[RMDB]
RNA sequence: GGGAACGACUCGAGUAGAGUCGAAAAACAAGCAUGUUUUCAAAUGGCACUAUGAGCUGCCAAUGAUGUAUCACCACCAUAUCUCAUUAUUCUCCAGUAAAUGUGAUAAUAAUGUCAUCUGUUAACAGAGUUGUUCACCUUUCGAGGUGAACAACUCAAAAGAAACAACAACAACAAC
Reactivity to 2A3 in 0.01 (KOAc 150mM, MgCl2 10mM, bicine 150mM(pH8.5), 24C), signal-to-noise 2, nucleotides 027 to 126: a000c070a020a020g140c120a080u040g000u040u030u090u110c050a070a140a090u040g000g030c020a000c000u020a170u240g170a050g060c110u030g000c000c000a030a000u040g000a030u100g020u000a100u090c050a000c050c000a020c010c010a020u000a080u170c050u000c020a000u000u020a070u150u000c100u000c000c000a010g050u120a000a160a210u000g000u010g040a030u040a060a060u040a000a080u000g010u100c020a030u000c150u110g060u060u090a000a000c020a050